[RMDB]
Structure probing data (2A3) for a 177-nucleotide construct.
RNA sequence: GGGAACGACUCGAGUAGAGUCGAAAAGGAGAAGUGCCUCAAUAUUUUGACGAAUGAUAUUAUUAAGUUUUUUACUACCUAAACUUCCUCCCAUGACUAAUAACACUUUUUUAUUUUUAUCAAAAUCCCAAGUGCAGGUGUUCGCACCUGCACUUGGAAAAGAAACAACAACAACAAC
Reactivity to 2A3 in 0.01 (KOAc 150mM, MgCl2 10mM, bicine 150mM(pH8.5), 24C), signal-to-noise 1, nucleotides 027 to 126: g020g000a010g100a000a020g060u000g030c000c010u160c000a040a060u090a110u030u140u050u030g050a050c070g050a020a230u080g000a000u010a000u120u110a240u200u230a070a030g070u120u000u000u000u000u170a110c080u050a050c000c000u020a000a000a060c000u000u000c020c000u000c000c000c000a020u070g000a000c060u040a000a030u100a090a010c080a020c000u140u130u000u120u000u000a110u060u160u000u050u000a300u050c000a000a000a000a110u090c010
The RNA was probed in 150 mM KOAc, 10 mM MgCl2 and 150 mM bicine (pH 8.5) at 24 C. For 2A3 the reverse transcriptase was SuperScript II with manganese. For 2A3, 378 sequencing reads were counted.